[RMDB]
Overview:
An RNA of 177 nucleotides, treated with DMS and 2A3 and read out base by base. High DMS reactivity at an A or C suggests that its Watson-Crick edge is free.
RNA sequence: GGGAACGACUCGAGUAGAGUCGAAAAACAAAGAGAUCGAAAGAGCAAUGUGUAACUCAUCAUCCUAGCGAAUGGUUGGGCACGAAAGAUCGAGUGUUACCAUCACAUCCCGGACGCUAGAAAAAAAACCGGUAUUAGGAUUCGUCCUAAUACCGGUAAAAGAAACAACAACAACAAC
Reactivity to DMS in 0.01 (KOAc 150mM, MgCl2 10mM, bicine 150mM(pH8.5), 24C), signal-to-noise 1, nucleotides 027 to 126: a040c100a060a030a100g000a120g000a040u000c020g010a010a070a110g000a080g000c080a070a030u000g020u010g000u010a060a120c010u010c030a060u000c040a080u020c040c010u010a060g010c000g000a140a080u000g000g000u000u000g010g000g010c040a050c060g000a040a100a080g000a030u000c080g030a180g010u010g020u000u010a180c030c020a010u020c090a100c100a100u020c030c000c030g030g040a250c030g000c040u010a020g030a010a050a010a090a040a050a090
Reactivity to 2A3 in 0.01 (KOAc 150mM, MgCl2 10mM, bicine 150mM(pH8.5), 24C), signal-to-noise 1, nucleotides 027 to 126: a000c040a010a100a010g160a020g010a080u080c040g050a100a100a040g050a050g000c040a030a060u110g020u000g000u040a050a020c010u010c040a070u040c010a010u010c010c010u020a010g010c010g060a100a060u050g020g000u040u050g020g000g020c000a000c010g090a140a120a010g120a090u190c090g010a030g030u000g020u030u080a040c030c000a010u040c040a040c000a110u060c020c040c000g000g030a000c020g000c010u020a010g000a050a010a020a000a010a000a000